Structure probing data (2A3 and DMS) for a 177-nucleotide construct. It was measured as part of the RMDB library M2PK50. Reactivities are given for positions 27 through 126. For DMS the reverse transcriptase was MarathonRT. The RNA was probed in 150 mM KOAc, 10 mM MgCl2 and 150 mM bicine (pH 8.5) at 24 C. The 2A3 profile rests on 2,251 reads.
[RMDB]
RNA sequence: GGGAACGACUCGAGUAGAGUCGAAAAUACGUACCGUUCGCGGUACGUAACUUACCGUGAACCUUGCUCGGUAUAACAAGGAAACCCUUGGAAACAAGGGAACAAGAUUACCCUUCGGGGUAAUCAAGUAGACGCGUUAAUUCGUUAACGCGUCUACAAAAGAAACAACAACAACAAC
Reactivity to 2A3 in 0.01 (KOAc 150mM, MgCl2 10mM, bicine 150mM(pH8.5), 24C), signal-to-noise 2, nucleotides 027 to 126: u060a000c000g000u000a010c010c000g000u000u050c300g020c000g050g000u000a000c000g010u010a000a020c000u030u120a040c000c000g000u030g090a030a090c020c000u010u040g000c040u040c080g050g000u150a110u060a160a040c040a030a020g040g020a100a090a040c010c000c000u010u020g030g000a040a030a020c000a010a000g000g000g030a000a020c000a040a050g000a010u010u000a000c000c010c000u000u080c180g030g000g000g000u000a000a000u000c000a000a020
Reactivity to DMS in 0.01 (KOAc 150mM, MgCl2 10mM, bicine 150mM(pH8.5), 24C), signal-to-noise 1, nucleotides 027 to 126: u000a000c000g000u000a010c000c010g000u000u030c210g000c020g010g000u000a000c000g050u000a010a070c100u010u000a170c000c000g030u000g000a070a130c000c000u000u010g000c050u000c050g010g040u000a030u030a060a140c100a120a000g030g030a110a120a090c020c000c000u050u000g000g000a130a030a180c000a000a010g010g000g000a060a050c130a100a100g000a030u000u000a000c000c000c000u000u000c110g000g010g010g000u010a000a010u010c000a020a100